RNA sequence: GGGAACGACUCGAGUAGAGUCGAAAAGAUAUGGAGGCUGGCUAGUCGGUGUCGGAAACGACAUGGCCGACUUGGACCCAGCUCCUAAGUCAAAACUCACGUCGUUGGUUCGCCAACGACGUGAGAACCAAUUAUGUCGGUUCGCCGACAUAAUUGGAAAAGAAACAACAACAACAAC
Reactivity to DMS in 0.01 (KOAc 150mM, MgCl2 10mM, bicine 150mM(pH8.5), 24C), signal-to-noise 2, nucleotides 027 to 126: g010a050u000a300u010g000g000a020g030g010c010u000g000g000c010u010a010g000u000c030g000g010u000g060u010c000g020g010a090a050a160c000g010a000c010a140u000g080g000c000c000g000a000c010u000u000g000g030a100c290c040c010a030g010c010u000c000c010u000a040a170g000u000c050a070a020a080a130c000u000c000a000c000g010u000c000g010u000u000g000g020u000u010c250g000c000c000a030a010c000g020a000c000g010u000g000a000g000a000a160
Reactivity to 2A3 in 0.01 (KOAc 150mM, MgCl2 10mM, bicine 150mM(pH8.5), 24C), signal-to-noise 2, nucleotides 027 to 126: g030a020u090a060u150g020g000a010g200g150c010u000g000g040c010u010a000g000u000c030g000g020u190g000u030c010g010g030a080a070a080c000g010a010c030a070u130g300g000c000c010g010a010c000u030u080g000g030a070c000c010c010a010g010c000u010c010c010u000a120a020g040u000c020a010a030a080a140c010u000c020a000c000g030u020c010g000u020u020g060g060u080u100c230g050c130c000a010a000c000g000a000c000g000u000g010a010g010a010a000
Chemical mapping of a 177-nucleotide RNA with DMS and 2A3. The RNA was probed in 150 mM KOAc, 10 mM MgCl2 and 150 mM bicine (pH 8.5) at 24 C. It was measured as part of the RMDB library TTRDEL. For DMS, 1,506 sequencing reads were counted.